[RMDB]
RNA sequence: GGGAACGACUCGAGUAGAGUCGAAAAUGACUAUCUCAACUUAAGUGUUCAUGCUUUAAAAGUGAUAACAUUAAAAUAUCUAUAGGAAGCUUGCAAAUGAUAUAUUUGAGAAUGUGCUAUAAUUGAACUGAAUGUAGUUUGCUUUGGAAAUUGACUAUAAUUAUUAGUGAUUCGUCACUAAUAAUUAAAAAGAAACAACAACAACAAC
Reactivity to DMS in 0.01 (KOAc 150mM, MgCl2 10mM, bicine 150mM(pH8.5), 24C), signal-to-noise 2, nucleotides 027 to 156: u000g020a120c030u000a120u020c010u010c000a080a130c060u000u000a090a110g040u000g000u010u000c060a080u010g000c010u010u000u000a070a110a130a140g040u000g000a060u000a040a040c000a120u000u000a090a120a130a120u000a070u000c030u010a140u010a160g010g010a110a100g030c060u000u010g020c070a040a080a050u010g010a130u000a040u010a000u010u000u000g000a080g000a080a080u010g010u000g010c000u000a110u000a000a130u000u010g010a100a170c040u010g000a040a080u000g010u000a030g010u000u010u000g000c030u000u010u000g010g010a040a030a130u000u010g030a070c090u000a210
Reactivity to 2A3 in 0.01 (KOAc 150mM, MgCl2 10mM, bicine 150mM(pH8.5), 24C), signal-to-noise 1, nucleotides 027 to 156: u030g000a000c030u030a030u060c000u000c050a010a050c030u100u150a110a040g030u050g020u060u060c040a040u110g000c000u090u000u040a110a110a100a000g050u080g030a030u040a100a020c000a000u130u100a090a050a120a040u110a100u010c030u040a060u120a120g060g050a050a030g010c000u070u090g070c040a040a070a160u090g050a000u060a030u010a000u120u080u090g000a000g000a030a070u080g020u030g010c020u050a030u040a270a190u110u100g010a060a000c010u060g020a030a020u120g040u010a100g050u010u090u130g050c030u090u030u000g040g000a110a180a230u050u130g000a000c000u090a030
Source: RMDB library OK3TST, as collected in RNAgym. This 207-nucleotide RNA was probed chemically with DMS and 2A3. 2A3 adducts were read by reverse transcription with SuperScript II with manganese. For DMS the reverse transcriptase was MarathonRT. Values cover nucleotides 27 to 156. The RNA was probed in 150 mM KOAc, 10 mM MgCl2 and 150 mM bicine (pH 8.5) at 24 C.